[RMDB]
RNA sequence: GGGAACGACUCGAGUAGAGUCGAAAAACUAGCUUACUUUAGUGAUUCAAAACUCGGCACCACAGAGGUUAAAGUGAGUGCUUUGAAAACAGCCGGCGUUGUGACAGGUAAUGUUGUAAAACAGUGUAUAUCACUCUCUUCGGAGAGUGAAAAAGAAACAACAACAACAAC
Reactivity to DMS in 0.01 (KOAc 150mM, MgCl2 10mM, bicine 150mM(pH8.5), 24C), signal-to-noise 4, nucleotides 027 to 129: a090c060u030a000g030c050u060u030a070c050u030u030u090a100g040u000g030a130u010u070c110a090a080a110a120c080u000c100g030g110c080a110c030c030a050c070a140g030a130g000g000u050u020a020a060a060g020u000g000a090g050u030g000c060u000u000u000g030a110a050a060a060c170a070g030c020c000g000g000c080g010u010u030g030u030g030a080c120a080g050g000u050a030a100u050g000u000u000g030u000a020a140a050a130c100a020g010u000g010u020a000u030a070
Reactivity to 2A3 in 0.01 (KOAc 150mM, MgCl2 10mM, bicine 150mM(pH8.5), 24C), signal-to-noise 2, nucleotides 027 to 129: a000c030u030a000g030c000u130u190a030c030u060u030u180a030g000u020g100a090u270u000c040a020a000a070a070c040u020c040g040g040c050a000c000c010a040c030a100g140a100g100g100u120u290a060a090a000g020u010g120a030g010u040g010c000u120u040u300g150a110a060a000a010c020a000g020c000c000g030g000c010g000u000u000g070u020g030a030c030a090g000g060u070a060a140u120g020u000u140g020u100a000a050a040a030c120a100g020u000g000u090a110u020a000
Chemical mapping of a 170-nucleotide RNA with DMS and 2A3. The DMS profile rests on 12,241 reads. It was measured as part of the RMDB library 15KLIB.